[RMDB]
RNA sequence: GGGAACGACUCGAGUAGAGUCGAAAAUCAAACAUACACUUGAGAAUUCUGUGUGAGGGUACUGUAGCAUCGGGUUACUGUACACCAAUCCAGACGAUUCUCAGGUGGUUUGACGCCGGUGAACAGCUCUUACGGAGACUUUCGAGUCUCCGUAAGAAAAAGAAACAACAACAACAAC
Reactivity to DMS in 0.01 (KOAc 150mM, MgCl2 10mM, bicine 150mM(pH8.5), 24C), signal-to-noise 3, nucleotides 027 to 126: u000c010a000a040a020c020a050u050a300c000a000c000u030u000g000a100g010a040a000u000u000c000u000g020u030g000u000g000a300g000g030g000u000a000c000u000g020u000a010g020c000a080u030c220g000g000g000u000u000a000c030u000g000u000a000c000a170c000c000a040a280u000c000c000a040g000a050c300g020a020u000u000c040u030c000a010g000g020u000g000g000u000u010u010g000a000c110g000c070c000g030g020u000g020a140a080c200a040g000c100
Reactivity to 2A3 in 0.01 (KOAc 150mM, MgCl2 10mM, bicine 150mM(pH8.5), 24C), signal-to-noise 5, nucleotides 027 to 126: u010c000a000a000a010c020a020u300a010c010a010c010u000u010g000a010g010a000a020u290u000c000u000g250u020g010u000g170a030g010g010g000u000a010c020u040g000u010a000g010c010a070u300c250g270g150g000u000u000a000c000u000g010u010a010c130a150c010c000a010a010u000c000c000a010g010a010c050g120a010u000u000c000u000c000a000g000g000u000g020g000u010u000u000g010a000c010g020c040c010g060g070u120g050a110a030c020a080g020c020